[RMDB]
The record gives the reactivity of an RNA of 207 nucleotides to DMS and 2A3. DMS adducts were read by reverse transcription with MarathonRT. It was measured as part of the RMDB library OK3TST. In probing experiments dimethyl sulfate is read out at A N1 and C N3, which are open when not base-paired. For DMS, 5,456 sequencing reads were counted. The 2A3 profile rests on 2,978 reads.

RNA sequence: GGGAACGACUCGAGUAGAGUCGAAAACUGCCCCGGAGGCUACCACGGCCGAGACGUUCAGCCGCGACUACGUCCAGAAGCUUCGUGACGAAGCUGCUGCGGCCCGCGUCGCCAAGAACGAGGCGGUCGCGGCGGCGGAGGCUCGCGUCCGCGGAGAAUGCUAUAACUUAUUCGUAAGUUAUAGCAUAAAAGAAACAACAACAACAAC
Reactivity to DMS in 0.01 (KOAc 150mM, MgCl2 10mM, bicine 150mM(pH8.5), 24C), signal-to-noise 2, nucleotides 027 to 156: c070u000g010c000c010c000c040g040g010a170g040g010c050u000a080c010c050a040c030g010g000c010c000g020a040g020a090c040g000u000u010c030a220g020c000c010g020c000g000a110c010u000a140c070g030u040c010c020a060g000a020a040g000c020u010u000c010g010u010g020a180c200g000a040a010g020c000u000g010c000u000g020c060g030g020c000c040c060g040c050g020u010c010g060c010c030a120a140g010a070a050c030g000a050g000g050c020g000g000u000c020g050c020g010g040c000g000g040c030g000g000a130g020g020c000u000c020g010c150g000u000c020c010g010c000g010g010a300g020a130
Reactivity to 2A3 in 0.01 (KOAc 150mM, MgCl2 10mM, bicine 150mM(pH8.5), 24C), signal-to-noise 3, nucleotides 027 to 156: c040u110g020c020c000c000c000g170g030a090g100g000c040u130a180c020c030a010c030g000g000c000c010g000a010g010a030c000g030u070u180c060a030g000c010c010g000c000g030a050c050u170a080c070g030u000c000c000a020g030a060a000g020c010u010u010c010g180u190g140a150c140g000a030a000g000c000u010g030c010u010g020c060g010g000c000c020c010g020c020g070u010c010g010c030c030a120a050g050a090a040c040g010a050g040g000c020g000g010u050c020g000c000g000g000c000g000g010c000g020g040a060g060g050c000u010c020g030c050g070u050c010c000g020c030g000g010a050g050a050